[RMDB]
RNA sequence: GGGAACGACUCGAGUAGAGUCGAAAACGAUGAGGGGAGAAGAGAAGUGGUCAGGUGGGUCGAAGACGCCCGCCCCACGGCGAACGCCCGUCGCGUGUUUGCAUGCGGGGGUCAGACCCCCUUACCGCAGUAUAGGUACUUUCGAGUACCUAUACUGAAAAGAAACAACAACAACAAC
Reactivity to 2A3 in 0.01 (KOAc 150mM, MgCl2 10mM, bicine 150mM(pH8.5), 24C), signal-to-noise 9, nucleotides 027 to 126: c040g050a080u140g030a100g000g020g030g000a070g020a140a040g060a030g020a170a020g060u060g040g000u030c050a030g000g040u160g050g070g000u020c020g050a150a070g040a020c050g220c060c000c010g010c020c010c010c010a060c050g040g010c010g010a060a010c030g060c030c050c040g080u080c040g010c040g000u040g020u030u160u180g090c070a060u130g010c010g020g000g000g000g000u010c010a000g020a030c000c000c000c010c010u000u010a010c000c000g000
Reactivity to DMS in 0.01 (KOAc 150mM, MgCl2 10mM, bicine 150mM(pH8.5), 24C), signal-to-noise 9, nucleotides 027 to 126: c080g010a070u010g010a060g010g010g010g010a100g010a100a090g010a110g010a090a090g020u010g010g010u000c090a040g010g020u010g020g010g010u000c010g000a140a120g010a050c100g000c000c000c010g020c010c180c050c030a050c100g010g010c020g010a050a070c130g000c050c050c150g010u010c100g010c080g020u000g000u000u010u000g020c090a070u010g010c020g010g000g000g010g010u000c030a160g000a130c030c000c000c000c000u000u000a010c020c020g010
Background
This 177-nucleotide RNA was probed chemically with 2A3 and DMS. DMS adducts were read by reverse transcription with MarathonRT. Reactivities are given for positions 27 through 126. The reactions ran in a buffer of 150 mM KOAc, 10 mM MgCl2 and 150 mM bicine (pH 8.5), at 24 C.